[RMDB]
RNA sequence: GGGAACGACUCGAGUAGAGUCGAAAAUGCUGACCGAGAUUGAACGCCUACCAGCUGUAUUGCAGGCGAUCAUCGCCCUCGACGGCUGAAACGAGCUGCAGGUGCUGCAGCACGCGCCCUGGCUUGGUCGGCUGCUGGCAGCGUCGAUCCUGCGCCAGCGGCCGCAUAAGUUCGCUUAUGCGGCCGCAAAAGAAACAACAACAACAAC
Reactivity to 2A3 in 0.01 (KOAc 150mM, MgCl2 10mM, bicine 150mM(pH8.5), 24C), signal-to-noise 1, nucleotides 027 to 156: u090g000c030u020g020a070c040c050g030a040g030a090u070u140g040a180a060c050g010c020c040u090a100c070c000a010g020c020u060g010u090a230u140u170g060c090a040g020g000c060g010a020u150c000a050u040c040g000c010c050c060u020c110g130a090c040g000g030c020u010g010a090a090a030c060g000a060g020c030u090g000c020a110g070g230u140g120c050u010g010c000a040g060c050a020c030g060c000g010c000c000c000u020g020g020c000u050u110g000g030u030c000g000g020c000u030g000c000u070g070g000c030a030g020c080g050u060c060g070a040u030c000c040u060g020c070g000c010c000a010